[RMDB]
RNA sequence: GGGAACGACUCGAGUAGAGUCGAAAACUUUUUAGUCUAGCAGCCAAUACUUUAACAUCACUAAUAUCGAUAUACAAAGGAGAUGAUUUAUCGAUGGUAUUAAGAAUUCGUUUUUCGACAUCCGUCAAAACCAAUUCCUUUUUGCCUGUAUCAUCCAUCUGCACGAUAAAUUCGUUUAUCGUGCAGAAAAAGAAACAACAACAACAAC
Reactivity to DMS in 0.01 (KOAc 150mM, MgCl2 10mM, bicine 150mM(pH8.5), 24C), signal-to-noise 2, nucleotides 027 to 156: c030u000u000u000u000u000a080g010u000c050u000a100g020c050a090g030c030c060a050a140u000a060c050u000u000u000a080a100c020a180u000c050a110c060u000a060a110u000a080u000c040g000a110u000a080u010a060c090a060a070a110g010g010a150g030a030u010g030a040u000u010u010a040u010c050g040a040u020g000g050u000a020u010u000a010a040g000a040a050u000u010c080g000u010u000u020u000u020c020g030a070c020a100u000c210c100g040u000c020a010a010a030a000c050c060a010a070u000u000c020c020u020u010u000u000u000g010c020c040u010g020u000a070u010c030a060u000c000c030a250
Reactivity to 2A3 in 0.01 (KOAc 150mM, MgCl2 10mM, bicine 150mM(pH8.5), 24C), signal-to-noise 5, nucleotides 027 to 156: c050u110u090u030u040u250a060g050u060c070u050a030g020c050a020g030c030c030a080a060u120a120c090u050u160u130a130a080c060a120u150c060a040c110u120a130a120u090a100u180c030g030a010u050a010u050a190c130a060a050a030g100g060a170g040a020u020g020a030u020u110u160a120u080c080g030a070u110g000g000u030a030u000u050a090a020g010a010a010u030u030c020g020u010u000u010u030u150c070g000a010c040a110u130c110c190g000u000c010a000a000a000a000c010c010a010a020u010u030c020c030u000u010u000u000u080g010c000c000u070g010u060a040u040c010a020u000c010c010a030